This 207-nucleotide RNA was probed chemically with 2A3. Reactivities are given for positions 27 through 156. 2A3 adducts were read by reverse transcription with SuperScript II with manganese.

RNA sequence: GGGAACGACUCGAGUAGAGUCGAAAAUAGGAUAAAGCACGCGCCGAGUGUGGCCAGGCCGUAUGAGCCUGGGUGUGGUAAUAACAUCCGACGCUCAUUCCAUUUUCUGGAAAAAAGGUGGACCCGCAGCCAAACCCGUUUCGGCGGGUGCUGUCCACUGCCUAUAGGUGUUCGCACCUAUAGGCAGAAAAGAAACAACAACAACAAC
Reactivity to 2A3 in 0.01 (KOAc 150mM, MgCl2 10mM, bicine 150mM(pH8.5), 24C), signal-to-noise 2, nucleotides 027 to 156: u160a030g020g000a020u110a130a210a000g000c000a010c000g250c000g000c020c000g000a000g000u160g050u300g000g000c020c000a020g000g000c000c000g050u060a050u020g010a010g030c080c140u160g000g000g010u000g010u010g000g120u220a150a130u100a170a070c000a000u000c010c000g070a070c080g000c020u000c000a040u040u030c000c000a020u080u050u040u000c220u120g090g000a110a130a020a000a020a000g010g000u000g020g000a020c020c030c130g030c040a000g000c020c010a040a040a000c050c010c020g020u080u270u060c000g020g010c000g000g000g000u010g000c000u000g000u000c000c000a010